[RMDB]
RNA sequence: GGGAACGACUCGAGUAGAGUCGAAAAGACGCCUACGAACAUGCGACCACUGUGCCAAAUGUACCGGGAGUGCCGUAUAAGGCACUGGUAGAGAGGUCAGGCUAUGCCCCAUUGAACCUGGAGGUGACUGUGCUACAUUCUUCGGAAUGUAGCACAGAAAAGAAACAACAACAACAAC
Reactivity to DMS in 0.01 (KOAc 150mM, MgCl2 10mM, bicine 150mM(pH8.5), 24C), signal-to-noise 2, nucleotides 027 to 126: g010a100c190g010c030c020u020a110c120g000a090a090c110a060u000g010c100g000a040c040c000a060c060u000g010u010g000c010c000a030a100a120u000g020u020a040c050c020g010g010g020a060g030u000g000c000c010g010u010a120u000a100a170g010g000c000a010c010u000g010g000u000a030g000a070g010a130g000g000u000c010a050g010g040c010u000a060u000g000c040c000c010c040a150u000u010g010a060a100c060c020u000g000g010a100g010g010u000g000a160
Reactivity to 2A3 in 0.01 (KOAc 150mM, MgCl2 10mM, bicine 150mM(pH8.5), 24C), signal-to-noise 1, nucleotides 027 to 126: g030a000c020g010c030c010u060a040c080g000a110a000c070a080u190g060c080g000a060c000c010a060c050u100g030u020g040c000c000a130a100a080u160g010u070a110c010c020g000g000g050a110g000u020g020c000c010g160u260a200u050a300a100g010g000c000a000c000u010g000g010u050a010g020a010g000a040g170g000u020c010a000g000g000c000u060a080u090g000c000c000c000c000a050u030u190g000a030a030c010c010u000g060g000a020g040g000u050g000a040
Chemical mapping of a 177-nucleotide RNA with DMS and 2A3.
The reactions ran in a buffer of 150 mM KOAc, 10 mM MgCl2 and 150 mM bicine (pH 8.5), at 24 C.
The 2A3 profile rests on 949 reads.
It was measured as part of the RMDB library OK2TRN.